RNA sequence: GGGAACGACUCGAGUAGAGUCGAAAAGAUAUGGACGAGAGCGAUAAGAUGGUGGUCGGAAACGACCACCCAUCUUUUGACGCUCGAGUCCUAAGUCAAAAGGCACACUUGUUCGCAAGUGUGCCAAUCUGCAAUAGUUGUUCGCAACUAUUGCAGAAAAAGAAACAACAACAACAAC
Reactivity to DMS in 0.01 (KOAc 150mM, MgCl2 10mM, bicine 150mM(pH8.5), 24C), signal-to-noise 3, nucleotides 027 to 126: g000a030u000a300u000g000g010a010c010g010a300g000a000g020c000g020a110u000a020a030g010a000u010g000g030u000g000g020u000c000g000g000a030a050a060c020g010a010c000c010a000c150c080c040a000u000c000u000u000u010u010g010a170c050g020c000u000c000g010a300g000u010c000c000u000a010a070g000u010c020a100a080a100a140g010g030c010a000c000a000c000u000u000g030u010u020c210g030c000a010a010g000u000g000u000g020c000c000a000a020
Reactivity to 2A3 in 0.01 (KOAc 150mM, MgCl2 10mM, bicine 150mM(pH8.5), 24C), signal-to-noise 2, nucleotides 027 to 126: g010a010u060a030u090g010g010a000c010g010a000g010a010g070c010g050a090u070a300a120g010a000u060g000g030u010g010g010u020c010g040g000a030a050a010c010g020a000c010c000a000c000c010c000a000u000c000u000u120u010u080g080a030c000g010c000u000c000g020a000g000u000c000c000u010a010a000g010u000c020a010a020a050a190g010g010c000a000c010a010c010u050u020g030u130u120c160g030c170a010a010g010u000g010u020g000c000c010a000a000
Chemical mapping of a 177-nucleotide RNA with DMS and 2A3.
The reactions ran in a buffer of 150 mM KOAc, 10 mM MgCl2 and 150 mM bicine (pH 8.5), at 24 C.